RNA sequence: GGGAACGACUCGAGUAGAGUCGAAAACUGUGGUGAGGCCCUAUCUAGUAUAGCAAUCCACCAAGCAGGUGAGUUCACACAAUUCAGGUUCUCAUAGAAAAUGCGCCCUGACUUGACAGGUAUGGUCCGAUACGUAAUCGUUCGCGAUUACGUAUCGAAAAGAAACAACAACAACAAC
Reactivity to DMS in 0.01 (KOAc 150mM, MgCl2 10mM, bicine 150mM(pH8.5), 24C), signal-to-noise 6, nucleotides 027 to 126: c030u000g040u020g010g010u010g040a070g000g010c170c190c010u000a010u010c010u010a150g020u030a050u030a050g000c110a060a170u020c070c010a020c010c030a060a080g010c130a090g010g000u020g000a070g000u000u000c080a070c150a170c110a050a080u000u010c050a050g010g020u000u000c010u010c010a080u050a140g000a090a050a090a050u020g000c120g010c300c000c000u000g000a050c070u000u000g010a100c060a090g000g030u000a050u010g000g000u000c090
Reactivity to 2A3 in 0.01 (KOAc 150mM, MgCl2 10mM, bicine 150mM(pH8.5), 24C), signal-to-noise 5, nucleotides 027 to 126: c010u030g030u060g070g030u040g030a060g010g040c020c020c000u000a030u030c060u030a060g090u080a060u060a070g020c050a040a050u030c010c000a010c020c010a060a030g090c060a030g000g040u040g020a040g010u060u040c020a030c010a020c030a190a080u100u080c040a030g000g040u100u040c030u000c020a040u070a100g170a030a120a020a010u090g020c030g030c000c010c000u020g030a050c030u070u060g020a020c040a060g020g070u120a080u130g020g020u030c020
Structure probing data (DMS and 2A3) for a 177-nucleotide construct. For DMS the reverse transcriptase was MarathonRT.